[RMDB]
Background
The record gives the reactivity of an RNA of 177 nucleotides to DMS and 2A3. For 2A3, 22,593 sequencing reads were counted. Source: RMDB library OK1LIB, as collected in RNAgym. For DMS, 12,595 sequencing reads were counted. The RNA was probed in 150 mM KOAc, 10 mM MgCl2 and 150 mM bicine (pH 8.5) at 24 C.
RNA sequence: GGGAACGACUCGAGUAGAGUCGAAAAGCGCGUAGGUUCAGAUGAUGGGCCCGCAUCUGUACGAAAGGGAGACGAAAGUCCAGCCUACGUGCAUGAGCACGCGGGCCCCGUGCUCUACAGCAAAAGACGUAUAUCAUACGUUCGCGUAUGAUAUACGAAAAGAAACAACAACAACAAC
Reactivity to DMS in 0.01 (KOAc 150mM, MgCl2 10mM, bicine 150mM(pH8.5), 24C), signal-to-noise 5, nucleotides 027 to 126: g010c000g010c010g000u010a010g000g000u000u000c030a000g010a020u010g010a060u060g000g000g000c000c000c000g000c000a020u000c000u000g020u050a120c120g000a130a100a080g000g010g000a260g010a020c020g000a100a060a140g010u010c000c050a090g010c000c000u000a010c000g000u010g020c000a030u030g000a140g000c020a020c040g010c110g020g000g000c000c000c010c010g000u010g000c020u000c010u020a120c090a140g010c140a060a070a110a090g010a210
Reactivity to 2A3 in 0.01 (KOAc 150mM, MgCl2 10mM, bicine 150mM(pH8.5), 24C), signal-to-noise 9, nucleotides 027 to 126: g010c010g000c000g010u010a000g010g010u050u110c040a020g010a060u040g010a030u070g020g000g000c000c000c000g000c000a000u000c010u020g130u120a120c120g170a140a070a080g100g040g010a220g020a040c060g090a140a050a010g020u000c000c010a010g010c010c000u000a000c000g000u000g000c000a000u050g010a000g000c030a010c020g000c030g000g000g000c000c000c000c000g000u000g000c000u000c010u030a080c050a080g090c060a050a080a030a040g130a030